Structure probing data (2A3 and DMS) for a 207-nucleotide construct.
For 2A3 the reverse transcriptase was SuperScript II with manganese.
Conditions: 150 mM KOAc, 10 mM MgCl2 and 150 mM bicine (pH 8.5), 24 C.
The DMS profile rests on 2,795 reads.
It was measured as part of the RMDB library PDB130.
[RMDB]
RNA sequence: GGGAACGACUCGAGUAGAGUCGAAAAUAAAUAUGGCUGAUGACCGAUAGCGGAUAAGUAGAGUGAUUGAAGUGUGAAAAGGAGGAUGAUGAGAAAUGAAAGUGAAUGGAGUGAAUGGGGGAUGUUCCCGCCCGUCUUGAAACACGGACCAAGGAGAGUACACAUGAAUCUUCGGAUUCAUGUGUACAAAAGAAACAACAACAACAAC
Reactivity to 2A3 in 0.01 (KOAc 150mM, MgCl2 10mM, bicine 150mM(pH8.5), 24C), signal-to-noise 3, nucleotides 027 to 156: u130a000a080a010u200a080u080g030g040c010u030g020a070u030g020a080c010c040g120a060u080a020g050c030g000g030a030u040a130a000g060u090a050g060a060g000u050g040a050u080u050g040a050a030g030u040g010u040g040a070a060a030a000g020g010a000g010g000a010u050g020a030u010g030a030g030a050a080a020u160g040a060a010a020g050u070g060a010a080u100g030g020a050g020u040g020a030a070u080g020g010g000g020g000a010u050g040u020u030c000c000c000g000c000c000c000g020u000c030u040u070g020a050a030a000c030a020c040g020g000a030c000c050a040a020g050g020a070g040a040
Reactivity to DMS in 0.01 (KOAc 150mM, MgCl2 10mM, bicine 150mM(pH8.5), 24C), signal-to-noise 2, nucleotides 027 to 156: u000a130a130a130u000a130u010g000g000c040u020g010a110u000g020a090c110c010g000a160u010a030g030c070g030g030a090u000a030a090g020u000a040g000a140g000u010g000a100u000u000g020a010a080g030u000g050u010g010a100a060a060a060g000g020a100g020g000a010u000g030a040u020g020a020g000a110a040a110u000g000a070a070a080g010u000g020a070a050u000g000g010a060g010u000g010a080a060u000g010g020g010g030g010a030u000g010u000u000c000c000c000g010c000c000c000g000u010c030u000u010g040a170a110a150c130a040c040g000g000a050c000c070a030a050g000g000a140g000a270